[RMDB]
RNA sequence: GGGAACGACUCGAGUAGAGUCGAAAAGAUAUGGAAAGAUGGUGCACUUAGCGGCUAGACAUGAAGAAGUAUCGGAAACGAUACCUGCUUCAACAGCUAGCGCUAAGUGCACCAUCUUUCCUAAGUCCAACACUGUUGUCUUCGGACAACAGUGUUGAAAAGAAACAACAACAACAAC
Reactivity to DMS in 0.01 (KOAc 150mM, MgCl2 10mM, bicine 150mM(pH8.5), 24C), signal-to-noise 2, nucleotides 027 to 126: g000a080u010a300u020g010g010a030a000a010g000a010u000g010g020u000g010c000a010c010u000u000a010g010c010g030g030c000u000a000g000a100c100a220u000g000a020a010g000a180a070g030u000a000u010c000g010g000a090a160a240c000g010a020u000a000c040c040u010g000c000u000u000c000a020a060c220a180g020c000u000a000g000c020g000c000u010a000a000g000u000g010c000a000c000c000a000u000c000u000u010u000c000c010u000a010a100g010u010c060